Chemical mapping of a 207-nucleotide RNA with 2A3 and DMS.
The reactions ran in a buffer of 150 mM KOAc, 10 mM MgCl2 and 150 mM bicine (pH 8.5), at 24 C.
High 2A3 reactivity points to a flexible backbone, as in loops and unpaired stretches.
For 2A3 the reverse transcriptase was SuperScript II with manganese.

[RMDB]
RNA sequence: GGGAACGACUCGAGUAGAGUCGAAAAGAAAGAAAGAAAGCUGACACUUCUGCUGACGGAUCUUGUGGAGCACCACAGUGCAGAAGGGGAGAGAAGCUUUAAUGCCGACCGUCUGGGCAGCCUUGAAAAAACGGAUUCUUCUUCGGAAGAAUCCGAAGUCAAGUACUAUGUUCGCAUAGUACUUGACAAAAGAAACAACAACAACAAC
Reactivity to 2A3 in 0.01 (KOAc 150mM, MgCl2 10mM, bicine 150mM(pH8.5), 24C), signal-to-noise 3, nucleotides 027 to 156: g040a020a030a000g050a030a060a020g080a040a060a000g010c030u040g060a040c030a030c110u010u010c000u010g040c040u040g020a030c030g050g000a070u100c060u130u050g010u020g020g030a090g160c100a120c090c020a010c010a040g060u040g040c010a000g010a020a010g000g010g060g020a100g020a020g010a050a020g000c000u030u050u040a120a080u090g010c000c020g020a050c010c010g030u000c000u050g000g040g000c010a000g020c000c020u080u110g060a100a070a000a000a000a040c000g000g000a000u000u000c000u000u000c000u000u030c110g100g000a000a000g000a000a000u000c000c010g000a010a000
Reactivity to DMS in 0.01 (KOAc 150mM, MgCl2 10mM, bicine 150mM(pH8.5), 24C), signal-to-noise 2, nucleotides 027 to 156: g010a110a090a110g000a140a110a140g000a070a050a050g020c010u000g000a160c040a050c010u000u000c020u000g020c000u000g020a190c090g000g000a110u000c040u000u000g030u010g010g020a140g040c160a090c000c020a030c030a070g010u000g010c010a050g010a040a030g020g000g000g010a180g010a100g010a140a050g000c000u000u020u000a050a060u000g020c030c000g010a100c050c010g000u000c070u010g030g000g000c010a080g000c040c050u010u000g000a000a060a090a080a100a170c000g030g010a020u000u000c000u010u010c010u000u010c290g070g000a030a010g020a020a020u000c010c020g010a000a040